[RMDB]
RNA sequence: GGGAACGACUCGAGUAGAGUCGAAAAAAUAUUCCAGUGCCACCGUACAUUGAAAGUCGACGCCUCGGAGCAGCUUGAGCCGGGCAUUCGCCCGGUCGAACCGUCGAAGUUCGUGGAAGCCGUAAUGACGUAGCUGAGGUUUCGACCUCAGCUACGUAAAAGAAACAACAACAACAAC
Reactivity to DMS in 0.01 (KOAc 150mM, MgCl2 10mM, bicine 150mM(pH8.5), 24C), signal-to-noise 1, nucleotides 027 to 126: a020a010u030a040u020u000c000c010a110g090u010g000c030c030a190c000c020g030u030a000c110a000u010u070g030a110a160a070g000u000c020g010a070c090g000c050c050u000c060g000g000a080g010c070a090g020c080u060u000g000a120g000c000c030g040g070g000c000a170u140u090c190g000c000c000c000g000g000u000c000g000a050a000c110c080g010u000c030g000a090a060g000u000u000c040g010u000g000g000a010a150g020c060c000g030u000a130a050u000g000
Reactivity to 2A3 in 0.01 (KOAc 150mM, MgCl2 10mM, bicine 150mM(pH8.5), 24C), signal-to-noise 1, nucleotides 027 to 126: a000a000u210a150u120u000c000c000a000g010u030g200c000c000a040c000c000g010u090a090c000a120u000u050g030a140a000a000g100u040c000g010a030c000g160c000c000u050c100g000g010a100g010c090a060g020c060u090u020g010a040g000c000c000g050g000g090c000a060u100u120c120g000c000c000c000g060g000u000c000g000a000a020c020c000g030u000c000g000a140a000g000u000u010c000g050u070g000g000a030a000g000c030c040g050u030a100a120u150g110
Annotation: Structure probing data (DMS and 2A3) for a 177-nucleotide construct. Reactivities are rounded to 0.1 and cut off at 0 and 3. It was measured as part of the RMDB library RFM100. For DMS, 1,372 sequencing reads were counted.